RNA sequence: GGGAACGACUCGAGUAGAGUCGAAAAGUACGCUAGCCAUGGACAUGGCCAUGAGUACCGAUCACUGCCAUGGAUCCACUGUAGUCGUACGUACGAUACAUGAGUACGUACCACGAUCCACAUGCUAGUUCGCACAACACUUCGGUGUUGUGCGAACAAAAGAAACAACAACAACAAC
Reactivity to 2A3 in 0.01 (KOAc 150mM, MgCl2 10mM, bicine 150mM(pH8.5), 24C), signal-to-noise 2, nucleotides 027 to 126: g000u040a010c020g000c050u050a020g020c030c030a120u130g060g060a080c050a090u010g030g000c020c000a090u100g040a030g020u080a150c020c010g020a020u050c060a020c110u070g060c030c000a020u020g070g050a080u030c040c000a080c160u100g010u100a000g050u070c020g000u060a000c000g000u010a000c010g040a040u130a220c150a130u280g080a010g020u000a010c000g000u010a020c010c010a010c050g020a040u070c000c010a030c040a030u140g010c000u030a020
Reactivity to DMS in 0.01 (KOAc 150mM, MgCl2 10mM, bicine 150mM(pH8.5), 24C), signal-to-noise 2, nucleotides 027 to 126: g000u000a040c070g020c020u000a030g010c000c030a060u000g000g030a120c090a030u000g000g030c010c080a090u000g000a050g010u000a110c090c090g000a140u000c060a050c100u000g000c000c040a090u010g040g000a080u000c000c040a100c210u050g000u000a070g000u000c220g000u000a000c020g000u000a040c020g000a070u000a070c260a160u000g010a170g010u000a020c000g010u020a070c000c060a010c030g010a030u000c050c060a090c060a060u000g000c040u000a040